[RMDB]
RNA sequence: GGGAACGACUCGAGUAGAGUCGAAAAGAUAUGGAACAGUUGAGCAGCAUACCGUUGAUCUCGGAAACGAGGGAGGUAUGACCCUGUGUAAGCUGUUCCUAAGUCAAAAGCGUAGUUCGCUACGCAAGUCUAAUCGUAUCUUCGGAUACGAUUAGACAAAAGAAACAACAACAACAAC
Reactivity to 2A3 in 0.01 (KOAc 150mM, MgCl2 10mM, bicine 150mM(pH8.5), 24C), signal-to-noise 4, nucleotides 027 to 126: g020a010u070a020u140g000g000a000a010c010a000g010u030u060g060a070g040c000a000g000c000a000u000a000c000c010g280u300u030g010a010u010c010u000c020g000g040a100a060a060c010g000a000g000g010g000a010g000g000u000a000u010g010a020c040c010c000u010g020u000g040u100a030a000g000c000u000g000u000u000c000c000u000a000a010g040u010c030a030a040a130a040g000c010g000u010a010g020u030u130c270g010c140u010a000c010g000c020a000a000
Reactivity to DMS in 0.01 (KOAc 150mM, MgCl2 10mM, bicine 150mM(pH8.5), 24C), signal-to-noise 4, nucleotides 027 to 126: g000a040u000a300u000g010g000a010a000c010a000g010u010u000g000a300g010c010a020g020c010a000u000a000c000c000g020u000u020g000a020u000c000u000c000g000g000a170a070a200c000g000a010g000g000g000a010g010g020u000a000u000g000a080c170c240c050u010g020u000g020u000a220a070g000c000u000g000u000u000c000c000u000a020a060g000u000c040a080a100a060a130g000c010g020u010a010g000u000u030c220g000c010u000a010c000g010c000a060a080
An RNA of 177 nucleotides, treated with 2A3 and DMS and read out base by base. The RNA was probed in 150 mM KOAc, 10 mM MgCl2 and 150 mM bicine (pH 8.5) at 24 C. 2A3 adducts were read by reverse transcription with SuperScript II with manganese. Source: RMDB library TTRDEL, as collected in RNAgym.